[RMDB]
RNA sequence: GGGAACGACUCGAGUAGAGUCGAAAAGCCAUAGUGAUUCCAAGCCCAAACGCGAUGCGGAGCCGAUAUGGACCCUUUCUAUUUUGUCAUUGGCGGAUUCGUAAUUUUCAUCUUCAUCUUCAAGAUGCACAUACUCUAAGUUCGCUUAGAGUAUGUGAAAAGAAACAACAACAACAAC
Reactivity to 2A3 in 0.01 (KOAc 150mM, MgCl2 10mM, bicine 150mM(pH8.5), 24C), signal-to-noise 9, nucleotides 027 to 126: g030c000c000a050u090a040g150u120g080a130u090u020c030c020a060a040g030c050c000c000a100a140a030c090g010c040g060a030u080g040c030g030g040a030g020c010c010g050a060u040a080u190g060g020a080c020c010c000u020u130u010c060u040a160u060u120u090u110g110u060c050a070u020u060g040g010c010g030g020a040u040u040c030g050u070a090a150u050u110u060u060c020a050u010c020u090u020c000a110u010c040u170u110c060a100a030g010a040u030g000
Reactivity to DMS in 0.01 (KOAc 150mM, MgCl2 10mM, bicine 150mM(pH8.5), 24C), signal-to-noise 7, nucleotides 027 to 126: g020c020c010a060u030a060g020u020g000a070u030u010c030c040a120a160g000c030c020c020a070a090a080c130g000c060g000a070u020g010c130g010g010a110g010c020c020g000a080u010a050u010g000g010a110c060c030c040u000u030u020c050u010a070u010u010u020u020g000u020c050a100u010u000g000g010c050g010g000a070u010u010c030g010u040a040a070u020u010u010u020c050a050u010c030u000u000c010a050u010c050u020u040c140a050a050g000a030u010g000